[RMDB]
RNA sequence: GGGAACGACUCGAGUAGAGUCGAAAACUGGCGAAUGCCUGUGGAUCUACAUUUGUUGCGGGUUCGAGACCCGUCAGAGCCCGGCUCUGUAGCUCAAUGGUAGAGCGGUGUAUUCACAUAAACUUGUAAAAGACACGUGCCUUCGGGCACGUGUCAAGUAACAUGAUUGGUUCGCCAAUCAUGUUACAAAAGAAACAACAACAACAAC
Reactivity to 2A3 in 0.01 (KOAc 150mM, MgCl2 10mM, bicine 150mM(pH8.5), 24C), signal-to-noise 2, nucleotides 027 to 156: c000u020g030g000c000g080a300a110u300g030c010c010u020g000u010g010g010a060u030c040u110a020c020a060u030u050u110g080u050u000g020c010g000g000g000u020u010c010g000a010g010a040c000c000c000g000u000c000a000g000a000g000c090c220c170g100g020c020u010c000u020g000u020a010g000c000u010c010a000a070u190g240g030u170a010g000a000g010c020g000g000u000g010u000a000u000u020c010a000c000a060u140a030a060a060c070u130u130g020u170a090a110a040a020g000a000c000a000c010g000u000g010c000c000u010u030c210g010g000g000c030a000c000g000u010g000u000c000a000a000
Reactivity to DMS in 0.01 (KOAc 150mM, MgCl2 10mM, bicine 150mM(pH8.5), 24C), signal-to-noise 1, nucleotides 027 to 156: c100u000g020g070c000g000a060a090u010g010c010c050u050g070u010g000g000a040u000c010u000a040c040a050u000u000u030g030u000u000g010c000g020g020g000u000u010c050g010a300g030a060c000c020c020g020u000c030a140g010a110g000c000c140c040g050g000c010u000c010u000g000u000a080g020c040u010c030a060a140u010g000g000u000a060g000a070g040c000g010g020u010g010u000a050u000u000c020a020c010a010u000a080a060a100c100u010u000g000u010a100a080a120a150g000a030c010a010c000g020u010g000c000c000u010u020c300g000g030g020c000a020c010g000u000g010u010c000a000a100
Notes
An RNA of 207 nucleotides, treated with 2A3 and DMS and read out base by base. Source: RMDB library M2RFPK, as collected in RNAgym. For DMS, 1,723 sequencing reads were counted. Conditions: 150 mM KOAc, 10 mM MgCl2 and 150 mM bicine (pH 8.5), 24 C.